[RMDB]
RNA sequence: GGGAACGACUCGAGUAGAGUCGAAAAGGUGACGGCGGAACAGGUUGCCGGGCUGACCGGCGUCGAUACCGGCUGCGGCGGCAUCACCUAUCCGGCCGGCGGCUGGCUGUGCCCGCAGCAGCUCACCUGGAGGUCAGGUAUUCGUACCUGACCUCCAAAAAGAAACAACAACAACAAC
Reactivity to DMS in 0.01 (KOAc 150mM, MgCl2 10mM, bicine 150mM(pH8.5), 24C), signal-to-noise 2, nucleotides 027 to 126: g000g020u010g000a070c010g000g010c000g010g000a090a050c260a000g000g000u010u000g000c000c000g000g000g000c080u030g010a190c010c000g000g010c020g030u000c120g000a240u020a170c000c000g000g000c000u000g000c000g000g000c000g000g020c020a050u060c120a050c050c050u010a030u020c000c000g030g000c010c000g000g000c060g010g000c000u010g000g000c050u010g020u000g010c020c010c050g000c020a010g000c020a030g010c040u000c010a010c020c020
Reactivity to 2A3 in 0.01 (KOAc 150mM, MgCl2 10mM, bicine 150mM(pH8.5), 24C), signal-to-noise 2, nucleotides 027 to 126: g110g020u050g010a010c020g010g000c010g000g040a140a090c050a060g000g020u030u040g000c010c010g010g020g030c030u050g060a290c010c010g020g030c020g090u150c040g000a030u080a190c000c010g000g000c000u010g000c000g190g040c000g010g010c010a060u070c050a080c010c000u030a060u030c010c050g200g070c010c000g020g030c020g040g010c000u040g110g070c010u030g000u020g080c000c080c010g000c000a030g000c000a000g000c010u030c010a020c000c010

Structure probing data (DMS and 2A3) for a 177-nucleotide construct. High DMS reactivity at an A or C suggests that its Watson-Crick edge is free. For DMS, 4,588 sequencing reads were counted. The RNA was probed in 150 mM KOAc, 10 mM MgCl2 and 150 mM bicine (pH 8.5) at 24 C.